[RMDB]
Conditions: 150 mM KOAc, 10 mM MgCl2 and 150 mM bicine (pH 8.5), 24 C. Structure probing data (DMS) for a 177-nucleotide construct. Reactivities are given for positions 27 through 126. For DMS, 605 sequencing reads were counted. Source: RMDB library OK2TRN, as collected in RNAgym.
RNA sequence: GGGAACGACUCGAGUAGAGUCGAAAAUUAGAAUGCACGGCCUGUUGUUUACAGGAGCUUUAAAAAUUUCUCCAGCUUUGGAUGAACUUUUCUUUUGAAGCAAGCUGGUAUAUGAGAUACGGCCUAGCCUUCUACAGGCAUUCGUGCCUGUAGAAGGAAAAGAAACAACAACAACAAC
Reactivity to DMS in 0.01 (KOAc 150mM, MgCl2 10mM, bicine 150mM(pH8.5), 24C), signal-to-noise 1, nucleotides 027 to 126: u040u000a130g010a220a100u000g040c080a120c200g010g010c010c020u000g010u000u010g030u000u000u000a040c030a040g020g000a230g000c020u010u000u010a030a030a010a070a070u010u010u010c020u000c010c000a060g020c170u010u010u010g020g000a110u010g000a020a060c300u000u000u000u000c140u010u030u000u000g020a070a050g050c040a010a110g010c000u010g060g000u000a060u010a130u000g010a110g010a130u000a040c160g010g000c000c030u010a190g010